Background:
Structure probing data (DMS and 2A3) for a 177-nucleotide construct. For 2A3 the reverse transcriptase was SuperScript II with manganese. For 2A3, 867 sequencing reads were counted. Source: RMDB library OK2TRN, as collected in RNAgym.
RNA sequence: GGGAACGACUCGAGUAGAGUCGAAAAGAGAUGUGGAAUUAUUACCUAUUCUUUGAGUGGAGAUGAUAUAAGCCUUGAAGGGUCUCAGGCCUACCCAUUGAAUGUCUCCUGUCACUUAUUAAGAAACCGAUAGUCUGAGGUUCGCCUCAGACUAUCGAAAAGAAACAACAACAACAAC
Reactivity to DMS in 0.01 (KOAc 150mM, MgCl2 10mM, bicine 150mM(pH8.5), 24C), signal-to-noise 2, nucleotides 027 to 126: g000a070g000a060u020g020u010g030g010a120a130u000u020a090u000u010a080c080c040u000a110u000u000c000u000u000u000g000a040g040u000g010g000a050g000a060u000g020a110u010a090u000a140a120g000c020c010u010u000g020a060a150g020g000g000u000c150u000c070a040g020g000c040c030u020a070c050c020c010a080u000u000g010a060a060u020g000u010c080u000c010c010u000g000u000c080a090c110u010u000a120u000u020a100a070g000a040a080a120c220
Reactivity to 2A3 in 0.01 (KOAc 150mM, MgCl2 10mM, bicine 150mM(pH8.5), 24C), signal-to-noise 2, nucleotides 027 to 126: g040a000g010a040u000g000u080g100g010a050a160u080u090a070u060u190a300c020c000u040a060u100u000c020u060u080u130g030a030g020u100g000g020a030g000a060u040g020a020u060a060u020a140a000g060c000c020u050u190g060a110a100g170g030g010u050c080u010c050a030g040g020c020c000u050a080c000c020c010a080u040u150g120a140a080u070g040u000c010u050c000c030u010g010u060c010a010c060u130u150a140u150u200a220a040g080a160a040a010c030